Source: RMDB library M2RFPK, as collected in RNAgym. An RNA of 207 nucleotides, treated with 2A3 and read out base by base. For 2A3, 491 sequencing reads were counted.
RNA sequence: GGGAACGACUCGAGUAGAGUCGAAAAAGUUAGGUUCGCUAUGGUGCAACUCUUUAAGGCAAUAACGAACUAAUUCUAAGCAAGUAAUGGAGAAAUGCCAGGGUCAAUAUCUAGCCAUAAUAGUGCUGUAAGUGACUUAGAUUCGUCUAAGUCACAAGUAGAGGCUAACCUUCGGGUUAGCCUCUACAAAAGAAACAACAACAACAAC
Reactivity to 2A3 in 0.01 (KOAc 150mM, MgCl2 10mM, bicine 150mM(pH8.5), 24C), signal-to-noise 1, nucleotides 027 to 156: a020g090u030u010a060g040g070u020u010c020g060c110u090a040u070g050g110u110g070c020a030a060c130u080c070u190u290u180a070a040g080g000c010a020a070u000a050a090c050g020a050a000c030u030a000a000u060u040c050u140a030a040g060c060a110a000g030u130a090a070u020g000g020a000g150a050a000a000u140g050c040c010a010g000g070g060u050c000a030a030u000a010u110c000u010a050g030c030c010a050u050a150a120u040a300g130u040g000c010u040g030u160a210a000g000u000g000a000c030u000u000a010g020a020u040u110c120g000u000c050u000a000a000g000u000c000a000c000a000a000